[RMDB]
RNA sequence: GGGAACGACUCGAGUAGAGUCGAAAAGUGACUUCGGUCACGCCCGAGGGGUCAGCGACAUGGCAGAGAGGCGAAGAACUUACUGAAGCCUCCACGGUAAGGGAGCCUCGAUCCAACAGCGCUGACGGAGGCACCCAUGGAUGUAGUUCGCUACAAAUUGCUAUAAUGUAUUCGUACAUUAUAGCAAAAAAGAAACAACAACAACAAC
Reactivity to DMS in 0.01 (KOAc 150mM, MgCl2 10mM, bicine 150mM(pH8.5), 24C), signal-to-noise 3, nucleotides 027 to 156: g010u000g030a030c010u000u000c290g070g010u010c000a030c030g000c020c010c020g010a090g020g030g010g010u000c010a040g040c010g030a120c070a240u010g000g040c070a130g010a300g030a030g040g010c020g030a110a140g020a090a230c020u000u000a050c020u000g000a060a140g010c010c000u000c000c020a270c070g010g030u000a040a030g020g010g030a180g030c000c000u000c000g000a220u000c020c040a050a170c060a100g010c010g020c000u000g000a040c030g000g030a060g070g000c000a220c010c010c010a220u000g000g010a090u010g000u000a100g000u000u000c110g030c040u000a060c060a050a100a160
Reactivity to 2A3 in 0.01 (KOAc 150mM, MgCl2 10mM, bicine 150mM(pH8.5), 24C), signal-to-noise 2, nucleotides 027 to 156: g000u010g000a020c020u040u170c280g060g010u000c020a020c010g000c000c000c000g000a180g020g030g030g020u040c010a010g000c030g120a250c130a210u060g020g030c150a000g020a000g000a000g050g000c000g020a100a010g010a010a010c000u000u000a000c000u000g070a180a020g000c000c000u000c000c010a000c000g030g010u000a000a000g000g010g000a010g010c000c000u010c000g000a030u000c010c000a020a040c050a040g120c040g000c020u010g010a030c010g010g020a000g000g000c000a040c030c000c030a080u230g080g040a100u110g040u060a010g020u020u090c140g070c100u140a000c020a050a080a220
An RNA of 207 nucleotides, treated with DMS and 2A3 and read out base by base. The reactions ran in a buffer of 150 mM KOAc, 10 mM MgCl2 and 150 mM bicine (pH 8.5), at 24 C. Source: RMDB library RNAMAK, as collected in RNAgym.